RNA sequence: GGGAACGACUCGAGUAGAGUCGAAAACGAGGGGUGGGCGAAAGUUGCCAUGAGACCGCAACUUUCGUAGUCAUUGAUAAAGGGGCAGGUCUCGCUCUUUUGUCAUUGCGGUUGCCUAGAGGCAUGGAAAACCAUGACAGGUUCGCCUGUCAUGGAAGGAAAAGUACCAGUUCGCUGGUACUUUUCCAAAAGAAACAACAACAACAAC
Reactivity to 2A3 in 0.01 (KOAc 150mM, MgCl2 10mM, bicine 150mM(pH8.5), 24C), signal-to-noise 2, nucleotides 027 to 156: c110g030a110g020g010g010g080u210g030g010g000c000g000a000a000a000g010u020u000g010c040c050a130u100g100a050g030a100c030c020g000c000a000a000c000u000u010u000c020g010u000a010g030u000c020a030u020u030g010a010u070a040a030a000g000g020g000g020c020a030g060g180u030c040u010c110g000c000u000c000u000u060u020u000g020u040c010a000u000u040g000c020g050g010u080u040g000c000c010u090a160g020a100g080g040c030a010u070g070g030a050a080a000a010c000c010a010u010g000a000c000a010g020g030u050u090c150g080c020c000u010g000u010c000a000u000g000g010a010a030
An RNA of 207 nucleotides, treated with 2A3 and read out base by base.
For 2A3 the reverse transcriptase was SuperScript II with manganese.
The reactions ran in a buffer of 150 mM KOAc, 10 mM MgCl2 and 150 mM bicine (pH 8.5), at 24 C.